[RMDB]
RNA sequence: GGGAACGACUCGAGUAGAGUCGAAAAAUUUAGGCCUUAAAAAUAAAGAUGGAGCUUACCAUGUGGUUAAAACAGGAAAGAGGAGGCCAAGCAGAGGGAAUGGGUACCACGGUGGUUAGAAAGAUAAAUGUAACAUUCCUUUCGAGGAAUGUUACAUAAAAGAAACAACAACAACAAC
Reactivity to DMS in 0.01 (KOAc 150mM, MgCl2 10mM, bicine 150mM(pH8.5), 24C), signal-to-noise 2, nucleotides 027 to 126: a100u010u000u000a150g000g000c020c000u000u030a040a060a080a110a150u010a060a090a120g010a110u010g000g000a140g010c040u010u000a020c030c010a070u000g020u020g000g010u010u000a050a030a080a080c160a070g020g000a030a060a140g000a080g020g000a040g010g000c040c040a040a110g000c140a070g010a070g000g000g000a060a060u010g000g000g030u000a040c090c060a050c070g020g020u000g000g010u000u000a070g000a110a030a050g010a060u000a040a110
Reactivity to 2A3 in 0.01 (KOAc 150mM, MgCl2 10mM, bicine 150mM(pH8.5), 24C), signal-to-noise 2, nucleotides 027 to 126: a000u130u130u090a050g020g000c000c000u120u070a000a220a060a060a040u240a060a090a030g080a040u130g060g030a070g080c020u040u010a060c010c000a070u080g000u070g000g040u100u120a090a120a080a090c100a070g040g050a100a060a080g040a060g020g010a030g010g010c010c020a010a010g070c060a010g060a010g070g000g020a110a040u080g020g010g020u010a040c000c030a010c010g030g010u040g030g000u040u050a030g060a000a080a020g110a020u100a050a260